Source: RMDB library RSTRND, as collected in RNAgym. This 207-nucleotide RNA was probed chemically with DMS and 2A3. The RNA was probed in 150 mM KOAc, 10 mM MgCl2 and 150 mM bicine (pH 8.5) at 24 C. High DMS reactivity at an A or C suggests that its Watson-Crick edge is free.
[RMDB]
RNA sequence: GGGAACGACUCGAGUAGAGUCGAAAAUAAGUUCAGUUGAGCCCGAAACUCAAGUGAUGCUAUCUAGCUUGAAUUUUGGUCAUCUUUGAUAGUGUAGAUUGAAAAUUGACAACUUUUAAUCGAAGUUAAAGUCUUAGUCUAGCUUGAAAUUUUGGAACACCAAAGGAUAGUUCGCUAUCCUUUGGUGAAAAGAAACAACAACAACAAC
Reactivity to DMS in 0.01 (KOAc 150mM, MgCl2 10mM, bicine 150mM(pH8.5), 24C), signal-to-noise 1, nucleotides 027 to 156: u020a060a100g000u000u000c030a060g000u010u000g020a070g030c090c010c210g020a060a030a010c000u000c010a020a030g000u010g020a270u000g040c000u000a050u000c000u000a300g040c010u000u030g010a020a060u000u000u000u060g070g010u010c060a100u000c090u000u020u000g010a060u000a050g020u000g000u000a130g000a030u010u000g000a030a020a030a060u010u020g000a060c050a090a140c060u020u000u020u000a010a070u000c140g000a110a100g000u010u020a080a090a140g000u020c060u000u000a090g020u000c080u010a130g000c040u000u030g020a070a080a010u000u000u000u000g000g010a250a240
Reactivity to 2A3 in 0.01 (KOAc 150mM, MgCl2 10mM, bicine 150mM(pH8.5), 24C), signal-to-noise 2, nucleotides 027 to 156: u170a040a010g040u030u040c060a010g030u080u040g040a020g040c000c000c010g000a050a010a000c000u000c010a010a010g000u030g050a030u080g010c010u000a010u010c000u000a000g000c000u030u000g030a050a080u080u090u140u130g180g000u050c020a060u020c120u090u140u180g020a020u010a000g040u070g050u010a010g010a000u010u080g060a070a030a020a050u030u050g000a010c000a010a020c060u050u050u020u070a070a010u040c030g000a020a000g000u000u170a170a100a040g020u000c030u010u110a040g040u000c020u000a020g000c070u020u070g050a090a120a190u140u100u110u110g000g000a040a030